RNA sequence: GGGAACGACUCGAGUAGAGUCGAAAAGAUAUGGACCGACGAGAGCAACAGCUCGUUUCGGAAACGAAACGAGGACAUGCUCGAGUCGGUCCUAAGUCAAACAGACGUGUCUUCGGACACGUCUGAACUUUAAGAUUUCGUUCGCGAAAUCUUAAAGAAAAGAAACAACAACAACAAC
Reactivity to DMS in 0.01 (KOAc 150mM, MgCl2 10mM, bicine 150mM(pH8.5), 24C), signal-to-noise 6, nucleotides 027 to 126: g000a030u000a300u000g000g000a020c000c000g010a010c020g010a300g000a020g010c000a030a060c220a300g010c010u000c000g010u000u000u000c000g000g010a080a080a180c000g010a000a000a010c000g000a010g000g000a050c190a140u000g000c010u010c000g010a290g010u000c000g000g010u000c000c010u000a000a080g000u000c030a090a070a260c030a000g000a010c000g020u000g010u000c000u000u000c240g020g000a000c010a000c000g000u010c000u000g000a010a070
Reactivity to 2A3 in 0.01 (KOAc 150mM, MgCl2 10mM, bicine 150mM(pH8.5), 24C), signal-to-noise 1, nucleotides 027 to 126: g010a010u070a050u110g000g000a000c000c020g000a020c000g010a010g000a010g000c020a010a250c050a190g100c000u010c020g000u000u000u000c000g010g020a060a030a010c020g000a000a000a020c010g000a010g020g040a020c030a160u210g010c000u010c010g000a010g010u030c010g000g000u000c010c000u010a000a000g000u000c000a010a020a030c010a010g010a000c000g000u010g000u050c020u050u050c260g100g010a000c000a010c000g000u030c000u000g000a000a000

An RNA of 177 nucleotides, treated with DMS and 2A3 and read out base by base. For DMS, 5,872 sequencing reads were counted. Conditions: 150 mM KOAc, 10 mM MgCl2 and 150 mM bicine (pH 8.5), 24 C. Values cover nucleotides 27 to 126. For DMS the reverse transcriptase was MarathonRT.